[RMDB]
RNA sequence: GGGAACGACUCGAGUAGAGUCGAAAACUCGUCCGUGUUCGCACGGACGAGAAAAACCGUAGGACGUUAGGUGGGAGCUGCAUCUUCGAAAGAGGAUGACCAGCUUUGAUCACCGACGUCCUAAACGGAAAAAUGCUCUCGGUUCGCCGAGAGCAAACUCACGGUCUAGUUUCGACUAGACCGUGAGAAAAGAAACAACAACAACAAC
Reactivity to 2A3 in 0.01 (KOAc 150mM, MgCl2 10mM, bicine 150mM(pH8.5), 24C), signal-to-noise 1, nucleotides 027 to 156: c000u000c000g000u020c010c000g040u010g060u040u100c300g000c200a000c000g000g000a050c010g010a010g000a020a000a010a000a000c010c000g020u020a010g020g000a010c030g000u020u060a160g000g000u000g000g020g000a000g020c000u020g020c000a010u010c000u020u000c010g080a020a040a020g010a000g000g000a000u000g070a190c080c050a000g000c010u140u120u050g100a090u070c010a000c000c000g000a000c000g000u000c000c000u010a000a000a020c000g000g150a000a000a010a000a210u160g010c000u010c000u000c050g000g090u090u160c300g050c090c000g060a010g000a000g000c000a000a000a000